[RMDB]
RNA sequence: GGGAACGACUCGAGUAGAGUCGAAAAACUAGUAUGUACAGGGGUGAGUUGACCUGUCAUCUAGACUGCUGACCAUCAACUCACCGGUCAGCUGGAUGAUUUCCACAGAGUACGACUCAAGUACUCAGAGUAAGGAUGCCUUCGGGUAUCUUUACUCAAAAGAAACAACAACAACAAC
Reactivity to DMS in 0.01 (KOAc 150mM, MgCl2 10mM, bicine 150mM(pH8.5), 24C), signal-to-noise 9, nucleotides 027 to 126: a190c000u000a000g000u060a010u000g000u060a010c000a020g010g000g010g000u010g010a080g010u000u000g010a060c030c020u000g000u000c000a000u000c010u000a010g000a160c050u000g000c010u000g000a010c000c060a150u020c110a060a060c100u020c090a070c180c140g010g010u000c000a010g000c000u010g000g000a140u020g000a140u000u000u000c000c010a080c230a100g000a020g010u000a010c000g010a140c240u030c230a100a120g010u000a010c000u010c000a110
Reactivity to 2A3 in 0.01 (KOAc 150mM, MgCl2 10mM, bicine 150mM(pH8.5), 24C), signal-to-noise 9, nucleotides 027 to 126: a000c010u010a010g050u140a070u080g070u100a010c010a010g040g040g030g060u130g090a130g050u050u060g090a090c000c020u010g010u000c000a000u000c000u010a020g060a110c030u030g000c010u000g010a000c010c010a040u110c040a050a100c050u040c090a060c040c020g000g000u000c000a000g000c010u010g020g030a100u110g010a040u050u010u010c020c010a050c040a050g000a000g000u010a000c030g120a080c110u030c120a030a020g000u000a000c000u000c020a010
Source: RMDB library OK1LIB, as collected in RNAgym. Chemical mapping of a 177-nucleotide RNA with DMS and 2A3. Values cover nucleotides 27 to 126. For DMS the reverse transcriptase was MarathonRT. For DMS, 63,215 sequencing reads were counted. The reactions ran in a buffer of 150 mM KOAc, 10 mM MgCl2 and 150 mM bicine (pH 8.5), at 24 C.